[RMDB]
RNA sequence: GGGAACGACUCGAGUAGAGUCGAAAACAUUUGGGAGAGGAGAGUAAAGGAGUGGUGUGUGCCAGAUUUUGAUUAAACUGAUUAUUAACCCAUAAGUGUUGACAGCUUUCCUCAAGCUGAGGGUAAAUAUCUUUCGCUACUUCGGUAGCGAAAGAUAAAAAGAAACAACAACAACAAC
Reactivity to DMS in 0.01 (KOAc 150mM, MgCl2 10mM, bicine 150mM(pH8.5), 24C), signal-to-noise 1, nucleotides 027 to 126: c130a080u000u000u000g000g000g000a150g030a090g060g010a100g020a040g020u010a050a170a090g010g010a100g040u010g000g040u000g010u000g000u000g000c080c020a070g010a090u000u010u020u010g030a120u000u040a020a030a030c100u000g000a090u000u000a110u000u000a110a040c050c000c000a090u040a100a160g010u000g000u000u020g010a140c030a050g000c030u000u000u000c040c060u000c110a070a110g000c010u000g010a050g000g010g000u000a090a050a090
Structure probing data (DMS) for a 177-nucleotide construct.
It was measured as part of the RMDB library OK2TST.
High DMS reactivity at an A or C suggests that its Watson-Crick edge is free.
DMS adducts were read by reverse transcription with MarathonRT.